[RMDB]
RNA sequence: GGGAACGACUCGAGUAGAGUCGAAAAUAAAUGAGCGUACAGCACACUCAGACUGUACGCUAUCUGAGUGUGUCAACUUCAAAGUCCAAGGACACACACAAGGCGUUGGAACAAGAGUGUGAGAAAACAGACCUUAGGAAUUCGUUCCUAAGGUCUGAAAAGAAACAACAACAACAAC
Reactivity to 2A3 in 0.01 (KOAc 150mM, MgCl2 10mM, bicine 150mM(pH8.5), 24C), signal-to-noise 4, nucleotides 027 to 126: u270a000a100a130u190g100a020g020c020g020u020a020c010a020g010c000a010c000a000c030u010c010a030g050a190c000u020g020u060a000c000g000c010u000a010u020c020u020g040a020g000u000g000u000g010u010c000a090a090c050u200u200c140a190a140a080g070u020c060c010a040a020g080g000a000c000a000c000a000c010a000c010a060a020g060g010c060g090u100u110g080g050a120a020c030a130a050g030a010g010u010g010u030g020a050g070a040a090a000a000
Reactivity to DMS in 0.01 (KOAc 150mM, MgCl2 10mM, bicine 150mM(pH8.5), 24C), signal-to-noise 5, nucleotides 027 to 126: u020a060a070a110u000g010a050g020c020g000u000a030c030a040g010c030a050c030a030c020u000c010a090g010a090c020u000g000u000a010c020g010c000u000a010u000c040u010g020a130g030u000g010u000g000u000c000a100a080c100u000u010c160a080a100a110g000u010c080c070a080a080g000g010a070c070a010c000a010c000a080c100a060a090g000g020c100g000u000u000g020g010a070a110c120a070a100g000a030g010u000g020u000g010a140g010a050a070a060a140
The record gives the reactivity of an RNA of 177 nucleotides to 2A3 and DMS. The data come from the RNA Mapping Database (RMDB), library M2PK90. The DMS profile rests on 5,088 reads. For 2A3, 4,508 sequencing reads were counted. For DMS the reverse transcriptase was MarathonRT. The reactions ran in a buffer of 150 mM KOAc, 10 mM MgCl2 and 150 mM bicine (pH 8.5), at 24 C.